Source information:
The record gives the reactivity of an RNA of 177 nucleotides to 2A3 and DMS. For 2A3 the reverse transcriptase was SuperScript II with manganese. It was measured as part of the RMDB library M2PK50. DMS (dimethyl sulfate) methylates the pairing face of unpaired adenines and cytosines. The DMS profile rests on 1,765 reads. The 2A3 profile rests on 2,370 reads.

RNA sequence: GGGAACGACUCGAGUAGAGUCGAAAAGUUUCAUCCUUCGGGAUGAAACAAAUAAAGUGACGCUCGCGCGUCACUGGCAUCGAGUAGGUCGAGCGGCCUACAAAAUCGACGGGUUCGCCCGUCGAAAGUCUUCACAUACGUUCGCGUAUGUGAAGACAAAAGAAACAACAACAACAAC
Reactivity to 2A3 in 0.01 (KOAc 150mM, MgCl2 10mM, bicine 150mM(pH8.5), 24C), signal-to-noise 1, nucleotides 027 to 126: g000u000u010u000c000a020u030c000c000u020u040c230g120g010g000a010u020g000a000a010a000c000a000a010a000u120a000a120a010g000u000g010a000c000g000c040u090c110g120c090g000c000g020u020c000a000c000u010g000g030c020a110u110c070g040a080g060u010a000g010g020u000c030g120a150g090c250g050g010c020c000u000a010c010a020a050a000a070u030c010g000a000c010g000g000g010u020u050c210g040c050c010c030g000u000c000g000a000a000a010
Reactivity to DMS in 0.01 (KOAc 150mM, MgCl2 10mM, bicine 150mM(pH8.5), 24C), signal-to-noise 3, nucleotides 027 to 126: g000u000u000u000c000a000u000c000c000u000u020c190g040g000g010a010u000g000a000a010a010c000a020a060a040u010a040a080a010g010u010g000a010c000g020c000u010c300g010c300g030c010g010u000c000a000c000u000g000g000c270a100u010c120g000a110g020u000a010g020g020u000c010g010a090g020c130g000g000c000c010u000a000c010a060a050a080a130u000c010g000a010c020g030g020g010u000u010c230g020c000c000c000g000u000c000g010a000a040a050